[RMDB]
RNA sequence: GGGAACGACUCGAGUAGAGUCGAAAAGGCGUUAGACCUGGUGACUAUGCUGGUCUGAAUUGCUUCUAUAAGGCGCAUUGCCGUGGCAUCUAACGUUCAUCACAUGACGCGGAAGUAUGGGGGCCUUCAAGGUACGUUCGCAGAGCAGCUAGAAGGAACUUUGAUCAGAUUUCGAUCUGAUCAAAGUAAAAGAAACAACAACAACAAC
Reactivity to 2A3 in 0.01 (KOAc 150mM, MgCl2 10mM, bicine 150mM(pH8.5), 24C), signal-to-noise 4, nucleotides 027 to 156: g040g000c030g050u090u080a020g000a090c000c030u040g050g010u060g040a070c040u040a050u200g000c030u130g020g150u020c010u030g040a080a070u110u130g020c010u050u030c020u050a130u030a150a040g030g000c020g000c040a030u010u100g000c010c010g030u020g010g000c030a060u020c050u060a090a050c050g030u120u090c070a070u090c010a040c010a060u070g010a030c030g000c010g040g040a030a130g040u020a050u140g040g000g010g070g000c030c000u020u040c050a060a030g050g000u050a030c070g040u020u090c050g010c070a010g000a010g030c010a000g010c010u040a030g030a040a040g090g030a020
Reactivity to DMS in 0.01 (KOAc 150mM, MgCl2 10mM, bicine 150mM(pH8.5), 24C), signal-to-noise 2, nucleotides 027 to 156: g020g000c040g020u000u000a080g010a100c040c020u000g010g030u010g010a100c080u000a060u000g030c000u020g030g030u000c040u010g010a090a130u000u010g020c030u000u010c020u010a210u010a060a110g020g040c040g010c100a100u000u010g000c010c010g030u010g000g000c040a090u000c030u000a040a060c040g000u000u000c070a140u010c030a070c100a100u000g000a070c020g020c030g010g020a070a090g040u000a110u000g010g020g020g030g050c030c010u000u000c060a100a120g020g030u000a040c040g000u010u000c030g080c060a140g010a080g040c040a070g010c010u000a100g000a070a080g010g000a110
Source information
The record gives the reactivity of an RNA of 207 nucleotides to 2A3 and DMS. Source: RMDB library OK3TST, as collected in RNAgym. For 2A3, 2,938 sequencing reads were counted. As a SHAPE reagent, 2A3 marks flexible, mostly unpaired nucleotides at the ribose 2'-OH. The RNA was probed in 150 mM KOAc, 10 mM MgCl2 and 150 mM bicine (pH 8.5) at 24 C.